[RMDB]
RNA sequence: GGGAACGACUCGAGUAGAGUCGAAAACUCAGAAGGAGCAUUGGUGAGUGACAGAUUUGCCUUCCACAGUGCAUAUCAUCCAAAUAUGCCGGGGUCAACUGUUUGCAUAAUGGACUUUUGCGAACAAAAUCAACAUCUAUUUCGAUAGAUGUUGAUUAAAAGAAACAACAACAACAAC
Reactivity to DMS in 0.01 (KOAc 150mM, MgCl2 10mM, bicine 150mM(pH8.5), 24C), signal-to-noise 9, nucleotides 027 to 126: c010u010c010a100g010a090a080g010g010a110g010c050a040u010u010g010g010u000g010a080g020u010g000a070c080a060g000a070u020u020u010g000c040c010u010u010c040c070a110c160a080g020u030g020c010a020u010a020u010c080a100u040c150c150a100a090a090u010a020u000g000c000c020g010g000g010g000u010c080a040a070c110u000g000u000u000u070g010c020a020u010a030a060u020g010g000a160c100u000u000u000u000g010c050g010a060a040c080a060a070
Reactivity to 2A3 in 0.01 (KOAc 150mM, MgCl2 10mM, bicine 150mM(pH8.5), 24C), signal-to-noise 9, nucleotides 027 to 126: c020u020c020a030g060a080a050g090g050a070g050c030a050u020u080g070g010u070g070a120g020u090g040a020c020a030g070a120u060u060u080g020c010c000u130u120c070c010a120c060a070g080u150g120c000a010u020a020u050c100a090u030c060c070a070a150a030u060a010u030g000c010c010g010g000g010g020u040c020a020a020c060u030g010u030u040u080g020c030a020u050a110a060u140g070g090a060c030u050u060u040u040g020c040g020a060a020c020a040a140